[RMDB]
RNA sequence: GGGAACGACUCGAGUAGAGUCGAAAAUCAUGCUGGCAGACUCAGGAGCAUCCUUGAUGGAUGGCUUGGGUGGAUAAGCUGGGAACCAAAGGGGUCGCACCCUACGGAUAAUCCAGCAAAGGUGUUACUAUUUCCAACUCUUCGGAGUUGGAAAUAGAAAAGAAACAACAACAACAAC
Reactivity to DMS in 0.01 (KOAc 150mM, MgCl2 10mM, bicine 150mM(pH8.5), 24C), signal-to-noise 2, nucleotides 027 to 126: u010c140a080u000g020c050u010g020g030c090a250g000a030c010u010c000a040g030g000a060g050c020a020u000c000c000u010u000g020a100u010g030g010a010u000g010g000c010u010u000g000g010g000u000g010g020a070u020a080a200g000c000u010g000g000g000a070a100c000c030a030a300a060g000g010g000g050u010c300g050c130a300c000c000c000u010a030c300g010g030a120u000a150a130u030c000c000a000g020c000a000a020a070g010g000u010g000u000u010a090